[RMDB]
RNA sequence: GGGAACGACUCGAGUAGAGUCGAAAACUGCCAGGCCUCAUGAAGGAAGAUGUGUUGCUCCACUGGGGAAGCACAGUCAUUCGUCAUUAGCAUGGAGAGUGAGGGAAUCUCUGGGAAUGGGACACUGAUGGAUGCUGGCAUGUGGGCCCAGGGAUAACAGUGUCCGUAAGUUCGCUUACGGACACUGAAAAGAAACAACAACAACAAC
Reactivity to 2A3 in 0.01 (KOAc 150mM, MgCl2 10mM, bicine 150mM(pH8.5), 24C), signal-to-noise 1, nucleotides 027 to 156: c080u020g000c000c000a000g000g040c020c020u020c050a040u030g020a020a000g230g080a000a050g030a020u040g000u010g020u060u000g110c000u160c050c040a260c180u140g100g000g000g000a000a010g000c000a000c050a020g170u070c050a240u030u030c020g020u020c000a000u020u020a020g070c090a030u110g020g000a110g020a040g080u240g050a220g000g000g020a070a050u000c000u010c000u040g000g000g020a070a290u100g000g020g040a050c030a010c210u270g010a080u130g130g000a060u200g100c040u050g030g030c050a030u200g080u000g080g000g020c000c000c070a070g020g000g000a000u000a080a000